[RMDB]
RNA sequence: GGGAACGACUCGAGUAGAGUCGAAAAACAGAGCAGUCGAAUAGAGCAGUCCUUCUAAGGUUAUCCAAAGAUACCCCCGUAGUGAACUUUCCCUUUAUCGCUUUAAAUCUGUAGUCCAGACCCCUACAAGGGGUGUUUCAUUCGUGAAACACCCCUUAAAAGAAACAACAACAACAAC
Reactivity to DMS in 0.01 (KOAc 150mM, MgCl2 10mM, bicine 150mM(pH8.5), 24C), signal-to-noise 1, nucleotides 027 to 126: a060c070a050g000a100g000c000a050g010u020c020g000a140a060u040a060g000a080g010c070a050g000u010c020c030u020u000c040u000a110a170g000g030u000u000a040u010c040c040a040a140a070g000a180u000a150c030c000c020c000c010g000u040a090g000u010g000a050a040c030u000u000u000c010c000c020u010u010u020a030u070c060g010c010u000u010u000a050a030a060u030c020u000g000u010a070g010u010c010c030a080g000a110c010c000c000c040u020a020c100
Reactivity to 2A3 in 0.01 (KOAc 150mM, MgCl2 10mM, bicine 150mM(pH8.5), 24C), signal-to-noise 1, nucleotides 027 to 126: a010c090a000g030a010g050c030a020g000u090c020g090a040a020u090a050g040a000g010c020a030g050u100c000c010u090u120c040u100a040a060g050g000u040u080a020u040c000c020a150a000a010g010a060u080a050c030c000c000c000c000g040u050a040g030u030g110a020a030c000u010u040u040c000c050c000u000u070u010a080u030c010g040c100u130u040u060a100a160a080u040c030u020g030u030a000g010u000c010c010a050g000a180c000c000c000c000u000a040c020
This 177-nucleotide RNA was probed chemically with DMS and 2A3. For DMS, 1,710 sequencing reads were counted. For 2A3 the reverse transcriptase was SuperScript II with manganese.